Chemical mapping of a 177-nucleotide RNA with 2A3 and DMS. For DMS the reverse transcriptase was MarathonRT. For 2A3 the reverse transcriptase was SuperScript II with manganese. Reactivities are given for positions 27 through 126. The RNA was probed in 150 mM KOAc, 10 mM MgCl2 and 150 mM bicine (pH 8.5) at 24 C.
[RMDB]
RNA sequence: GGGAACGACUCGAGUAGAGUCGAAAAUAUAGGUUUGCCUUCCUCUUACAAACCGAGCAACAAUCUGUGUCAGUCAGCAACAACUCUUUUGGUGUCGUCGGGCAACGAAGGCGACGUGAAGCGAUUCGCCGGUGGAUAUAUUCGUAUAUCCACCGGCAAAAGAAACAACAACAACAAC
Reactivity to 2A3 in 0.01 (KOAc 150mM, MgCl2 10mM, bicine 150mM(pH8.5), 24C), signal-to-noise 2, nucleotides 027 to 126: u160a020u050a040g070g000u000u020u070g040c030c000u010u040c000c000u030c000u020u030a040c030a020a080a020c000c010g010a050g020c000a010a070c020a060a110u050c030u100g060u000g040u030c060a050g020u000c000a000g000c020a050a060c010a040a090c050u020c000u010u090u050u060g100g000u010g010u010c010g020u000c030g010g090g030c030a090a040c040g130a020a060g030g010c010g000a010c000g040u020g070a040a010g100c040g060a140u040u110c050
Reactivity to DMS in 0.01 (KOAc 150mM, MgCl2 10mM, bicine 150mM(pH8.5), 24C), signal-to-noise 3, nucleotides 027 to 126: u060a090u040a140g010g000u000u000u000g010c050c030u000u000c030c000u000c030u030u000a180c080a000a040a130c020c020g000a040g000c080a040a140c170a080a070u010c090u000g000u000g000u020c040a030g030u000c040a060g000c090a050a060c010a050a160c060u020c060u020u000u010u020g010g010u000g000u030c060g000u000c050g000g000g030c030a050a040c080g010a070a090g020g010c000g000a020c100g000u030g000a090a090g000c110g010a130u020u000c120